Structure probing data (2A3) for a 207-nucleotide construct. The 2A3 profile rests on 508 reads. Values are in units of 0.01, from 0 to 300, in steps of 10.

RNA sequence: GGGAACGACUCGAGUAGAGUCGAAAAGAAUUUGGCGAGGGUUGAUGACCGAUUUACCGUCAAAUCCUAACUGUUUGAUCAUACGAACUUCGUUUUGGAAUCCUUCUGUAUUAUUGACAUCAGAAUAAACAGUAUCAAUGGCAGCAAUUCCAGCAGACCACUAUGCGAGUUUCGACUCGCAUAGUGGAAAAGAAACAACAACAACAAC
Reactivity to 2A3 in 0.01 (KOAc 150mM, MgCl2 10mM, bicine 150mM(pH8.5), 24C), signal-to-noise 1, nucleotides 027 to 156: g030a070a030u010u030u020g000g000c050g030a250g000g060g020u070u030g070a170u200g030a050c050c000g000a110u140u180u140a020c050c000g000u010c000a000a000a000u040c030c050u030a020a020c030u030g060u110u010u090g120a110u050c080a050u070a110c020g070a070a100c060u070u070c080g040u070u110u160u080g010g050a010a010u020c030c000u000u080c010u010g080u030a160u110u050a050u090u110g090a010c020a110u020c000a040g010a120a030u070a070a050a000c030a010g030u080a050u050c060a050a050u090g000g050c010a010g000c020a070a060u100u000c020c010a000g020c000a020g050a050